[RMDB]
RNA sequence: GGGAACGACUCGAGUAGAGUCGAAAACUCCGUGCAUGGCAGACUCUGAAUUGCGGAAGAAGGCAGCCAAGAUACACCAGCCAACCCUGUUACAAAACGAGGGGACAAAUGAGUGGAUCACAAACCACUCUAAAGGCCGGUUCGCCGGCCUUUAGAGAAAAGAAACAACAACAACAAC
Reactivity to DMS in 0.01 (KOAc 150mM, MgCl2 10mM, bicine 150mM(pH8.5), 24C), signal-to-noise 1, nucleotides 027 to 126: c050u000c040c030g030u000g020c020a030u050g000g010c040a040g000a050c080u000c100u000g000a130a090u040u000g000c120g000g000a060a020g010a130a080g060g020c020a100g000c130c070a070a070g030a200u020a080c080a080c090c020a080g010c090c010a050a150c000c000c020u000g000u000u000a100c290a140a080a080a050c040g000a070g000g010g010g000a140c170a070a160a020u030g000a000g000u000g010g000a030u000c210a220c300a050a140a070c000c000a000
Reactivity to 2A3 in 0.01 (KOAc 150mM, MgCl2 10mM, bicine 150mM(pH8.5), 24C), signal-to-noise 2, nucleotides 027 to 126: c010u000c000c030g040u060g040c060a150u040g060g000c030a000g000a090c010u060c060u040g070a130a000u050u040g000c000g050g010a030a080g130a010a010g100g000c000a040g070c040c000a000a020g000a020u060a000c020a020c000c000a040g060c040c000a040a090c020c030c000u010g060u160u250a200c130a120a110a190a010c040g080a020g000g000g010g010a000c020a010a170a080u040g000a000g060u030g010g010a010u100c010a000c040a010a130a070c000c000a060
The record gives the reactivity of an RNA of 177 nucleotides to DMS and 2A3. Conditions: 150 mM KOAc, 10 mM MgCl2 and 150 mM bicine (pH 8.5), 24 C. The DMS profile rests on 1,047 reads. It was measured as part of the RMDB library OK1LIB.